[RMDB]
RNA sequence: GGGAACGACUCGAGUAGAGUCGAAAAGACGGAAAAGAUCGAACCUAAGAAGAUAAGGAAGUGAGAGCCGAAUCCUAGGGCUCCUAGGGACGCAUCGUCCGAUGCGAAAUAAACACUAACGUCGAAACGAUGCAUCGAGUUUCGACUCGAUGCAUCGAAAAGAAACAACAACAACAAC
Reactivity to 2A3 in 0.01 (KOAc 150mM, MgCl2 10mM, bicine 150mM(pH8.5), 24C), signal-to-noise 2, nucleotides 027 to 126: g010a000c040g070g030a000a060a000a010g080a040u050c020g030a050a010c000c000u030a060a050g060a080a040g040a150u110a150a030g070g070a000a010g180u040g010a140g020a000g060c020c010g020a050a080u020c040c000u010a060g050g050g010c040u030c000c000u050a020g000g010g020a010c000g000c000a010u020c000g170u130c130c120g010a000u030g000c000g040a070a000a050u130a010a160a000c080a020c020u040a080a000c060g040u000c040g030a000a000a070
Reactivity to DMS in 0.01 (KOAc 150mM, MgCl2 10mM, bicine 150mM(pH8.5), 24C), signal-to-noise 2, nucleotides 027 to 126: g020a050c020g010g000a100a050a080a070g000a100u010c070g000a030a150c080c020u000a140a200g000a150a110g040a010u040a130a050g040g020a090a110g030u050g000a240g010a090g000c030c010g010a090a150u010c010c030u000a090g000g000g000c090u020c030c000u000a020g030g000g000a190c110g070c030a000u000c000g040u020c200c060g000a010u010g000c010g000a080a070a060u040a090a010a130c000a000c050u000a050a040c080g040u060c000g020a040a040a100
The record gives the reactivity of an RNA of 177 nucleotides to 2A3 and DMS. It was measured as part of the RMDB library OK1LIB. DMS adducts were read by reverse transcription with MarathonRT. For 2A3, 1,930 sequencing reads were counted.